[RMDB]
RNA sequence: GGGAACGACUCGAGUAGAGUCGAAAAGAUAUGGACCUAGAACCCUCGCACAGCGUUGAAAUCGGAAACGAUGGAGCUGUGAGUGGAGGUCCCUAGGUCCUAAGUCAAAGGGAUCUUCGGAUCCCAAGAUAUGCUCUACGUUCGCGUAGAGCAUAUCAAAAGAAACAACAACAACAAC
Reactivity to DMS in 0.01 (KOAc 150mM, MgCl2 10mM, bicine 150mM(pH8.5), 24C), signal-to-noise 4, nucleotides 027 to 126: g000a030u000a300u000g020g000a020c000c000u000a000g010a170a080c120c010c010u000c020g010c000a000c000a010g010c000g010u000u010g000a060a110a030u000c000g010g000a160a100a160c000g000a000u000g020g020a070g010c000u000g000u000g000a000g000u010g000g020a020g000g010u000c150c200c010u010a000g010g010u000c000c000u010a000a070g010u000c050a080a110a150g010g000g000a020u000c000u000u010c240g010g010a010u000c000c000c010a010a000
Reactivity to 2A3 in 0.01 (KOAc 150mM, MgCl2 10mM, bicine 150mM(pH8.5), 24C), signal-to-noise 3, nucleotides 027 to 126: g060a010u090a050u140g000g000a000c000c000u000a000g020a020a040c010c000c000u000c010g010c000a010c000a010g010c010g290u300u050g020a020a020a000u010c010g030g040a060a030a030c020g000a010u010g000g020a010g000c000u010g000u000g010a000g020u220g140g090a060g010g020u030c040c050c000u010a000g020g000u000c000c000u010a080a010g020u000c020a080a000a080g020g000g010a000u000c000u040u130c300g100g010a000u010c020c020c010a020a000